Structure probing data (DMS and 2A3) for a 207-nucleotide construct.
For 2A3 the reverse transcriptase was SuperScript II with manganese.
The RNA was probed in 150 mM KOAc, 10 mM MgCl2 and 150 mM bicine (pH 8.5) at 24 C.
RNA sequence: GGGAACGACUCGAGUAGAGUCGAAAAGCAGGAAAUGAGGCUCAAUAGAACAUGAAAAGCCAGUGUUAAUACACCAUUCAAUCUCAAGAAAGAGUGGGAGGAAGAAUGACAGAGCUGUUUUUUGACAGAUGAGUGGUUAGGCAUCCCCCUAGCUCUAGAAAAUAGGACCAUUCGUGGUCCUAUUUUCAAAAGAAACAACAACAACAAC
Reactivity to DMS in 0.01 (KOAc 150mM, MgCl2 10mM, bicine 150mM(pH8.5), 24C), signal-to-noise 1, nucleotides 027 to 156: g040c000a070g020g000a090a060a090u010g040a060g020g000c020u010c050a050a150u000a090g020a090a050c100a090u020g020a040a100a120a100g000c010c010a080g010u000g010u010u000a060a150u010a170c040a010c000c020a050u000u000c010a060a210u000c030u000c070a040a140g000a070a070a180g010a070g030u000g000g020g000a140g030g000a040a080g010a060a050u000g000a080c090a090g000a170g010c020u010g010u000u020u020u010u000u010g010a040c080a110g000a110u010g000a040g000u000g010g010u010u000a020g010g000c040a130u010c000c020c000c000c020u000a060g010c020u010c000u000a300
Reactivity to 2A3 in 0.01 (KOAc 150mM, MgCl2 10mM, bicine 150mM(pH8.5), 24C), signal-to-noise 2, nucleotides 027 to 156: g040c000a000g050g010a070a050a080u110g030a040g000g010c000u020c040a060a000u070a070g050a040a060c040a090u090g050a050a140a000a000g010c030c000a000g000u010g020u020u110a160a100u180a130c050a020c030c010a000u010u020c000a060a080u010c040u010c020a040a170g080a190a070a040g030a030g020u040g020g020g010a020g050g010a020a070g050a060a050u050g020a000c030a090g040a010g030c000u000g060u020u040u010u030u030u070g040a030c020a040g080a050u070g000a030g070u010g000g000u000u000a020g010g000c010a090u060c000c000c000c020c020u000a010g000c030u000c020u070a000